RNA sequence: GGGAACGACUCGAGUAGAGUCGAAAAGAAAAAGAGCACGAGAGAGACUAAUGUCUCGAGUAGUGGAUACGAAGGCCUAAGUAUCGACUACGAUAUCGAAGGCCUAAGAUAUCGAGUGCUCGAAAAAGGGAUAAUUAUCCUUCGGGAUAAUUAUCCCAAAAGAAACAACAACAACAAC
Reactivity to DMS in 0.01 (KOAc 150mM, MgCl2 10mM, bicine 150mM(pH8.5), 24C), signal-to-noise 3, nucleotides 027 to 126: g030a060a100a110a120a170g000a000g000c000a010c030g000a140g000a280g000a010g010a000c010u010a170a150u040g000u000c000u000c000g000a120g060u030a040g030u030g010g000a000u000a000c000g000a280a040g010g040c000c010u020a110a170g000u010a000u000c020g000a170c220u020a120c060g020a000u010a000u040c000g000a220a070g000g000c000c010u000a020a160g000a110u000a000u000c000g000a130g020u010g000c000u000c000g000a040a040a040a070a030
Reactivity to 2A3 in 0.01 (KOAc 150mM, MgCl2 10mM, bicine 150mM(pH8.5), 24C), signal-to-noise 2, nucleotides 027 to 126: g180a010a020a010a010a000g000a000g000c000a000c020g020a010g010a000g010a000g030a000c000u150a300a090u300g000u000c000u010c020g010a000g010u060a010g030u080g030g000a000u000a010c010g110a100a010g020g000c000c000u030a020a010g000u010a000u000c000g070a050c070u300a130c040g000a000u000a000u110c030g040a030a030g010g000c000c000u000a000a000g000a010u000a000u000c000g010a010g000u010g000c000u000c020g010a030a020a000a050a000
Chemical mapping of a 177-nucleotide RNA with DMS and 2A3. Reactivities are rounded to 0.1 and cut off at 0 and 3.